Structure probing data (DMS and 2A3) for a 207-nucleotide construct. For DMS the reverse transcriptase was MarathonRT. The data come from the RNA Mapping Database (RMDB), library M2RFPK.
RNA sequence: GGGAACGACUCGAGUAGAGUCGAAAAUCCACUAUAAAUCUAGUCACUAAAUAAACACAAUUAGCUACUGUGUGUAAUAGUGAGUGUUGAUAACACAAAAUAAUAGUAUAGUUUUGGAAGAUUAUACGCGCCCUUGCUCCGUUCGCGGAGCAAGGAAGAUGACAGGUAGGUUCGCCUACCUGUCAUCAAAAGAAACAACAACAACAAC
Reactivity to DMS in 0.01 (KOAc 150mM, MgCl2 10mM, bicine 150mM(pH8.5), 24C), signal-to-noise 1, nucleotides 027 to 156: u000c040c000a210c100u020a170u000a090a030a150u010c090u010a210g020u000c000a010c020u000a040a000a040u000a070a200a030c000a000c010a020a050u000u000a180g000c080u030a070c000u000g030u000g010u000g000u000a160a300u000a000g010u000g010a090g010u010g000u000u010g040a080u000a140a070c080a130c080a080a080a040a070u010a210a300u000a180g000u000a010u010a030g000u000u000u000u030g160g000a140a140g000a040u020u040a000u000a010c020g050c020g000c040c000c030u010u000g000c000u010c000c000g110u000u010c240g000c080g130g090a000g030c000a000a000g000g000a030a040
Reactivity to 2A3 in 0.01 (KOAc 150mM, MgCl2 10mM, bicine 150mM(pH8.5), 24C), signal-to-noise 3, nucleotides 027 to 156: u020c020c010a020c060u200a170u120a170a160a080u060c060u070a040g110u030c010a000c000u000a010a050a020u040a020a050a000c000a000c010a020a100u130u130a100g060c020u140a060c010u040g000u000g010u000g000u010a040a020u000a020g020u000g010a020g020u030g040u040u020g090a180u290a300a030c040a010c020a040a140a030a050u240a090a060u100a090g010u010a010u010a050g000u000u030u110u120g090g030a070a080g000a080u040u080a020u050a060c040g020c000g020c050c000c000u000u000g000c020u000c000c000g000u060u010c160g000c040g130g010a010g010c000a000a000g000g000a000a000